Source information
This 177-nucleotide RNA was probed chemically with 2A3 and DMS. For DMS the reverse transcriptase was MarathonRT. It was measured as part of the RMDB library OK2TST. The DMS profile rests on 1,131 reads.

[RMDB]
RNA sequence: GGGAACGACUCGAGUAGAGUCGAAAAUAUUAGCCAAUAUGCUUCCUUUAAUUAUUGGUUUAGGCAUUUUAGCACUUAUUAUUACAUGGUUCGGUAGUAUUUUAAAAACAGGUAGUCCGAUUCAAAACCCUCCAUAUUACUUCGGUAAUAUGGAGGGAAAAGAAACAACAACAACAAC
Reactivity to 2A3 in 0.01 (KOAc 150mM, MgCl2 10mM, bicine 150mM(pH8.5), 24C), signal-to-noise 1, nucleotides 027 to 126: u100a040u050u080a010g000c010c000a000a000u020a010u090g010c050u090u040c010c000u160u170u130a190a080u060u040a010u020u040g000g000u000u010u150a070g030g050c000a030u010u080u040u130a010g030c030a020c110u130u020a070u130u000a040u070u130a280c050a050u110g110g020u030u040c000g000g000u030a050g040u010a190u110u070u030u050a100a290a000a100a010c030a010g140g040u000a020g060u030c060c000g020a020u010u000c030a090a100a020a000
Reactivity to DMS in 0.01 (KOAc 150mM, MgCl2 10mM, bicine 150mM(pH8.5), 24C), signal-to-noise 2, nucleotides 027 to 126: u000a090u010u000a040g010c000c010a020a000u000a000u000g000c130u000u000c020c010u000u010u000a150a070u010u000a040u000u000g000g020u010u020u020a070g000g000c010a090u030u000u010u010a110g020c050a160c080u000u000a090u000u000a170u010u000a040c060a110u000g000g030u000u010c100g000g010u000a080g000u010a020u000u010u000u000a020a080a080a070a070c130a050g000g000u000a070g020u000c000c010g000a130u000u020c030a040a070a140a150